Structure probing data (DMS and 2A3) for a 177-nucleotide construct.
RNA sequence: GGGAACGACUCGAGUAGAGUCGAAAAGGCGCAUCAAAGCCGAUCUCAUUAACCAUAAUCUGACACAAGAGAAGGUCAUGGAAGCCGCACUCAGGAGUGAAACCCAUGUCGCAAGCUAAUCAAACUGCGUACGGUGUAGAUUCGUCUACACCGUACGAAAAGAAACAACAACAACAAC
Reactivity to DMS in 0.01 (KOAc 150mM, MgCl2 10mM, bicine 150mM(pH8.5), 24C), signal-to-noise 2, nucleotides 027 to 126: g000g000c030g050c180a100u000c170a120a120a200g000c010c020g000a080u000c040u000c030a110u000u010a140a180c120c030a050u000a110a060u000c070u020g000a130c090a090c080a060a090g020a060g020a110a050g010g000u000c060a040u000g020g000a070a050g000c070c100g000c060a100c080u000c090a060g020g010a040g010u000g000a060a060a080c050c030c040a010u010g000u000c120g000c090a120a060g030c070u010a040a040u010c090a040a040a090c120u020g000
Reactivity to 2A3 in 0.01 (KOAc 150mM, MgCl2 10mM, bicine 150mM(pH8.5), 24C), signal-to-noise 2, nucleotides 027 to 126: g000g000c060g000c090a170u100c110a180a080a040g000c030c010g020a020u040c030u010c010a060u120u190a050a070c000c000a040u070a200a030u080c040u070g050a050c010a000c040a250a060g060a010g000a190a000g020g020u010c010a020u090g050g010a040a040g010c030c010g020c030a030c060u060c050a080g000g060a050g070u070g060a050a010a000c030c000c000a040u030g050u020c030g000c070a020a050g000c030u110a060a120u180c030a020a030a070c030u090g030